An RNA of 177 nucleotides, treated with DMS and 2A3 and read out base by base.
Source: RMDB libraries RFM100 and RFMREP, as collected in RNAgym.
RNA sequence: GGGAACGACUCGAGUAGAGUCGAAAAGUUGAAAAAUGGUUAAAAAGUGGAUAACUCAUGGGGAUCAUGAUAAAAACAGGGUUUUUUGGCUUAUUUUCUGAGUAUUAAUACUGCAUCAAUAAAUUAUUAUUCCAAUGAGAUUCGUCUCAUUGGAAUAAAAAGAAACAACAACAACAAC
Reactivity to DMS in 0.01 (KOAc 150mM, MgCl2 10mM, bicine 150mM(pH8.5), 24C), signal-to-noise 2, nucleotides 027 to 126: g020u010u020g000a020a030a060a100a080u010g010g000u010u020a050a040a070a110a040g000u010g000g010a090u010a080a090c150u000c040a040u020g000g020g020g030a030u020c050a040u000g000a050u010a040a090a020a100a060c050a110g000g000g040u020u000u020u010u000u000g010g000c060u000u010a030u050u020u010u020c010u020g010a050g000u010a080u000u020a040a040u010a030c030u020g000c070a050u010c070a030a060u010a020a080a080u030u010a080u020
Reactivity to 2A3 in 0.01 (KOAc 150mM, MgCl2 10mM, bicine 150mM(pH8.5), 24C), signal-to-noise 2, nucleotides 027 to 126: g030u050u060g090a040a000a000a090a100u120g030g030u050u080a080a050a030a080a030g050u030g190g000a070u060a170a080c030u050c040a040u050g010g060g060g060a080u080c020a010u000g080a080u080a050a050a010a010a000c060a050g030g080g010u000u000u000u000u060u020g010g000c000u080u040a060u150u060u010u020c020u020g000a010g020u070a070u110u090a220a150u060a090c080u130g010c000a010u040c020a030a120u060a300a110a010u100u160a120u110
The RNA was probed in 150 mM KOAc, 10 mM MgCl2 and 150 mM bicine (pH 8.5) at 24 C.